[RMDB]
RNA sequence: GGGAACGACUCGAGUAGAGUCGAAAACUUUAUAUUCAUAAAAAUGCACCUUAUAGAGAAACUAUUAUAGAAUAUCUAAGCUACUUCCAAACAUCUAGUCCUUCGUAUUUGAUUAUGGCUAGUUUAGCAAUGGAAUCAGGUUCGCCUGAUUCCAUUGAAAAGAAACAACAACAACAAC
Reactivity to DMS in 0.01 (KOAc 150mM, MgCl2 10mM, bicine 150mM(pH8.5), 24C), signal-to-noise 1, nucleotides 027 to 126: c010u020u000u010a020u010a060u030u040c010a000u030a000a050a050a070a120u010g000c060a050c160c050u010u010a180u010a060g000a150g000a170a140a120c040u060a020u010u000a090u010a040g000a060a020u000a000u080c030u000a030a000g000c030u000a050c050u000u030c040c000a100a030a050c230a100u020c000u000a050g000u000c030c020u000u000c090g090u030a100u000u000u030g000a050u060u030a070u040g020g020c080u010a010g030u000u030u000a050g000
Reactivity to 2A3 in 0.01 (KOAc 150mM, MgCl2 10mM, bicine 150mM(pH8.5), 24C), signal-to-noise 5, nucleotides 027 to 126: c000u030u060u020a040u020a000u020u010c000a020u080a070a060a070a100a080u100g050c030a110c040c020u230u140a170u140a220g100a020g030a100a200a020c020u030a030u170u030a040u040a090g010a020a010u010a010u070c070u060a020a010g010c020u040a070c010u100u010c010c000a080a090a100c020a090u030c010u010a010g020u030c040c010u040u080c020g080u150a240u080u130u200g060a080u050u090a040u120g020g010c020u000a000g020u030u040u060a030g030
The record gives the reactivity of an RNA of 177 nucleotides to DMS and 2A3. For DMS, 1,515 sequencing reads were counted. The data come from the RNA Mapping Database (RMDB), library OK1LIB. 2A3 is a SHAPE reagent: it acylates the 2'-hydroxyl of flexible nucleotides of all four kinds. For DMS the reverse transcriptase was MarathonRT.